[RMDB]
RNA sequence: GGGAACGACUCGAGUAGAGUCGAAAAGGAUUUCGCAGCCCUUGAAGCCCGACGCUCAGCGCAACGAACACACCACAACCACAGACAUGAGACGGCCCCCGCCGGGACGGCAAUCCCAGUGCGAGGGACAUUCACUGCUAUUCGUAGCAGUGAAUGUAAAAGAAACAACAACAACAAC
Reactivity to DMS in 0.01 (KOAc 150mM, MgCl2 10mM, bicine 150mM(pH8.5), 24C), signal-to-noise 6, nucleotides 027 to 126: g000g000a130u000u010u010c130g000c050a220g020c090c010c020u010u010g000a120a130g010c020c020c020g000a080c130g000c040u010c040a120g000c070g000c070a060a060c100g000a080a080c080a070c050a020c030c030a040c060a070a070c080c040a050c100a070g000a090c070a040u010g000a090g010a090c100g000g000c010c010c010c000c000g000c010c030g020g000g000a020c030g000g000c270a050a280u000c000c000c000a090g020u020g030c000g000a070g000g010g000
Reactivity to 2A3 in 0.01 (KOAc 150mM, MgCl2 10mM, bicine 150mM(pH8.5), 24C), signal-to-noise 6, nucleotides 027 to 126: g040g010a060u050u070u080c050g000c030a020g030c010c000c000u010u060g060a050a010g040c020c010c010g020a040c040g010c010u040c020a020g010c010g000c040a030a040c040g070a110a010c030a000c000a010c040c000a030c020a050a050c010c010a050c030a070g080a040c020a090u120g030a060g020a060c020g040g000c010c010c000c000c000g000c010c010g000g000g000a010c010g070g030c030a020a060u020c000c010c010a030g050u060g050c010g000a100g000g000g010
The data come from the RNA Mapping Database (RMDB), libraries RFM100 and RFMREP. Structure probing data (DMS and 2A3) for a 177-nucleotide construct. For 2A3 the reverse transcriptase was SuperScript II with manganese. The RNA was probed in 150 mM KOAc, 10 mM MgCl2 and 150 mM bicine (pH 8.5) at 24 C.